Chemical mapping of a 207-nucleotide RNA with 2A3 and DMS. The RNA was probed in 150 mM KOAc, 10 mM MgCl2 and 150 mM bicine (pH 8.5) at 24 C. For DMS the reverse transcriptase was MarathonRT. 2A3 adducts were read by reverse transcription with SuperScript II with manganese. Reactivities are given for positions 27 through 156.

RNA sequence: GGGAACGACUCGAGUAGAGUCGAAAAUAGCUGGGAUGACAGGCACCCACCAUCACUUAGUUCACAUCACUUUUGUAUUUUUAGUAGAAACGGGGUUUUAGCAUGUUGACCAGGCUGGUCUCGAACUCCUGAUCUCAGGUGAUCCGCCCUCCUCGGAUCAUGACGCAGUAUUCGUACUGCGUCAUGAAAAAGAAACAACAACAACAAC
Reactivity to 2A3 in 0.01 (KOAc 150mM, MgCl2 10mM, bicine 150mM(pH8.5), 24C), signal-to-noise 2, nucleotides 027 to 156: u110a020g000c020u010g030g010g040a070u060g060a020c040a020g050g000c000a070c010c000c020a040c010c010a040u080c010a000c010u050u100a060g060u150u080c040a020c000a090u060c010a020c040u120u070u180u120g020u050a180u030u140u000u040u110a050g020u020a020g020a020a070a020c040g000g000g000g000u030u000u010u040a030g000c050a060u130g010u040u080g040a010c010c010a000g140g040c090u080g010g020u010c010u010c020g000a020a010c010u020c010c000u030g160a160u030c090u020c020a000g060g010u050g030a000u060c030c020g050c040c010c010u040c020c040u040c030g010g000a000
Reactivity to DMS in 0.01 (KOAc 150mM, MgCl2 10mM, bicine 150mM(pH8.5), 24C), signal-to-noise 2, nucleotides 027 to 156: u010a060g010c050u000g020g030g040a110u000g000a120c040a080g040g020c060a130c020c020c000a130c030c010a110u010c000a080c050u010u000a130g010u010u010c050a090c080a200u010c040a060c050u010u010u010u000g030u000a060u000u000u010u000u000a110g000u000a110g010a030a070a120c140g000g020g020g010u000u010u000u000a120g050c030a050u000g000u010u000g010a080c010c020a030g020g010c100u010g030g030u010c000u000c070g020a030a100c020u000c010c020u000g000a090u010c020u000c040a070g020g010u000g010a110u010c040c000g000c040c000c030u000c020c000u000c060g000g000a100